[RMDB]
RNA sequence: GGGAACGACUCGAGUAGAGUCGAAAAGCACUUAGCACAUCUUAGAGCAGAGAUUCGAGAAUUAACUAAUGAUUAUAAUCAACAGCGACAAAGUCGGACUCAAACAUAUCACUUUAUUCGUACUGCAGGACUAUAUCAAUUUCGAUUGAUAUAGUCCAAAAGAAACAACAACAACAAC
Reactivity to DMS in 0.01 (KOAc 150mM, MgCl2 10mM, bicine 150mM(pH8.5), 24C), signal-to-noise 5, nucleotides 027 to 126: g010c030a050c050u000u020a070g000c060a070c110a080u020c040u000u020a100g020a080g010c060a050g010a100g010a120u000u000c040g030a090g010a070a090u040u020a060a080c050u010a060a160u000g010a050u000u030a070u070a110a140u040c030a040a080c140a050g000c070g010a080c130a030a060a080g010u000c040g010g010a080c030u000c020a080a060a080c190a050u050a070u010c030a030c040u030u010u000a050u010u000c040g000u000a060c070u030g000c140a130
Reactivity to 2A3 in 0.01 (KOAc 150mM, MgCl2 10mM, bicine 150mM(pH8.5), 24C), signal-to-noise 9, nucleotides 027 to 126: g040c020a020c080u080u090a020g030c040a030c010a140u060c040u050u120a030g010a020g060c050a010g050a050g030a220u050u060c040g020a020g070a140a160u160u110a090a050c050u050a090a050u060g060a040u070u150a100u140a270a070u050c030a030a070c020a050g040c010g070a030c060a040a110a020g050u030c020g020g010a040c010u010c000a040a110a060c050a050u180a050u140c020a020c040u080u110u100a110u120u120c060g030u030a060c020u040g030c040a050